[RMDB]
RNA sequence: GGGAACGACUCGAGUAGAGUCGAAAACCUCGGUAAUGGCGAAUGGGACCCAGAACUCUCUCAGAAUCUAGGGAGAUCUCCCAGAUUCGAGAGAAAACUGGCUCUCCCUUAGCCAUCCGAGUGGACGUAGGGUAGCUGUUCGCAGCUACCAAAAGAAACAACAACAACAAC
Reactivity to 2A3 in 0.01 (KOAc 150mM, MgCl2 10mM, bicine 150mM(pH8.5), 24C), signal-to-noise 6, nucleotides 027 to 129: c000c000u000c000g020g010u090a130a030u000g000g010c020g040a070a050u040g000g000g000a030c040c000c000a000g010a070a050c020u000c010u010c010u020c030a130g000a010a000u010c010u170a190g010g040g000a070g060a140u150c110u030c140c000c000a000g000a000u000u000c000g000a000g000a000g000a010a020a000a010c000u000g000g020c010u010c010u000c000c020c000u000u000a000g010c000c000a000u000c000c000g000a000g030u180g040g050a070c080g060u140a110g050
Reactivity to DMS in 0.01 (KOAc 150mM, MgCl2 10mM, bicine 150mM(pH8.5), 24C), signal-to-noise 4, nucleotides 027 to 129: c000c000u010c010g060g000u070a070a030u030g000g000c010g050a210a020u020g000g000g000a060c270c000c010a010g020a120a290c170u010c000u000c010u030c000a120g050a020a020u010c010u020a090g080g040g000a060g040a150u080c120u050c000c000c020a060g020a030u000u000c030g000a020g010a010g040a000a010a000a100c030u000g000g000c010u040c010u020c000c000c000u000u000a220g010c040c000a030u030c000c020g000a020g020u000g020g030a010c080g070u030a120g000